Conditions: 150 mM KOAc, 10 mM MgCl2 and 150 mM bicine (pH 8.5), 24 C. This 177-nucleotide RNA was probed chemically with DMS and 2A3.

RNA sequence: GGGAACGACUCGAGUAGAGUCGAAAAUGCUUUUAAUGCCUGAGAUGCCGCUUGAACUGCUCGGUUGACUUCAUCGGUUCGAGCUUCCGGCAUGUGUGCCCAGACUUCACCUGUUGCAGGAUUAAUACGUAUGACGACUAUUCGUAGUCGUCAUACGAAAAGAAACAACAACAACAAC
Reactivity to DMS in 0.01 (KOAc 150mM, MgCl2 10mM, bicine 150mM(pH8.5), 24C), signal-to-noise 3, nucleotides 027 to 126: u010g000c080u000u000u000u000a080a050u000g010c030c020u010g070a090g010a080u010g010c050c100g000c160u010u010g010a010a050c170u000g000c100u000c070g000g010u010u000g010a070c110u000u000c230a100u000c140g020g000u000u000c000g000a000g010c070u010u010c050c040g000g000c000a000u000g030u020g020u000g010c060c040c010a140g000a070c110u000u000c090a100c050c040u000g040u000u010g000c050a040g000g010a120u010u010a050a110u010a140
Reactivity to 2A3 in 0.01 (KOAc 150mM, MgCl2 10mM, bicine 150mM(pH8.5), 24C), signal-to-noise 2, nucleotides 027 to 126: u020g030c040u080u100u050u150a110a070u110g050c000c030u090g070a110g000a150u040g090c060c020g070c090u040u060g020a030a010c060u030g020c040u020c080g100g000u130u140g050a070c020u170u070c060a060u120c040g060g000u080u180c000g000a000g000c000u040u020c000c010g000g000c000a000u010g010u020g020u030g010c010c020c010a000g040a060c040u150u040c050a080c070c020u070g140u290u120g100c030a030g010g030a050u100u220a060a070u150a080
Values cover nucleotides 27 to 126.
DMS adducts were read by reverse transcription with MarathonRT.
2A3 adducts were read by reverse transcription with SuperScript II with manganese.